[RMDB]
RNA sequence: GGGAACGACUCGAGUAGAGUCGAAAACUUUGCACACACAGAUGGCUCGUUCGGAACACCACCUGGAUACGGCUGCGCUGCAGACCGGGCAGAGGAGCAGCGCCGGCACCAAGAUGGGCUGCCCUACCACACAAGCGUAAUUCGUUACGCUUGUGUGAAAAGAAACAACAACAACAAC
Reactivity to DMS in 0.01 (KOAc 150mM, MgCl2 10mM, bicine 150mM(pH8.5), 24C), signal-to-noise 4, nucleotides 027 to 126: c050u000u000u010g000c030a040c070a080c110a090c080a090g020a060u000g000g010c050u000c070g030u000u000c120g030g010a110a060c090a140c060c020a040c030c000u000g010g010a130u010a070c120g000g000c030u000g000c010g020c010u000g010c020a080g010a140c030c030g000g000g010c090a040g020a140g000g000a190g000c010a010g000c040g040c020c050g010g000c010a090c050c040a060a080g010a130u010g000g000g020c030u000g000c020c010c020u000a130c130
Reactivity to 2A3 in 0.01 (KOAc 150mM, MgCl2 10mM, bicine 150mM(pH8.5), 24C), signal-to-noise 3, nucleotides 027 to 126: c010u070u060u160g020c030a010c010a000c000a000c010a100g030a170u040g020g000c010u030c070g030u100u060c050g040g060a060a020c040a020c030c000a030c010c010u020g030g020a040u040a110c060g050g000c020u030g000c070g020c010u040g000c000a030g070a180c010c050g000g060g000c080a050g030a060g060g010a040g000c000a000g000c010g010c020c050g000g000c000a020c050c010a030a010g090a100u140g000g020g000c010u040g000c000c010c020u050a060c030
Chemical mapping of a 177-nucleotide RNA with DMS and 2A3.
2A3 adducts were read by reverse transcription with SuperScript II with manganese.
For DMS, 4,090 sequencing reads were counted.